RNA sequence: GGGAACGACUCGAGUAGAGUCGAAAAGCUCGGAUGGAUAUAAUACAACCUGCUAAGUGUACUACCACUUACCAGGUUGUAUUAUUAUCGUCCGUGUUAAAGCCGAUAUCGUUCGCGAUAUCGGCAACUAUGAUUUGUCGUUCGCGACAAAUCAUAGAAAAGAAACAACAACAACAAC
Reactivity to DMS in 0.01 (KOAc 150mM, MgCl2 10mM, bicine 150mM(pH8.5), 24C), signal-to-noise 1, nucleotides 027 to 126: g020c010u000c020g000g000a050u000g000g010a000u000a010u000a000a000u000a000c000a010a000c000c000u000g000c300u000a000a010g000u000g020u000a130c250u010a120c290c000a000c000u000u000a000c200c000a010g000g000u000u000g020u000a000u000u000a000u000u000a000u000c000g000u000c010c010g000u010g020u000u010a050a160a090g000c000c000g000a010u000a000u000c000g010u000u000c170g040c010g010a000u000a000u000c000g020g000c000a010a000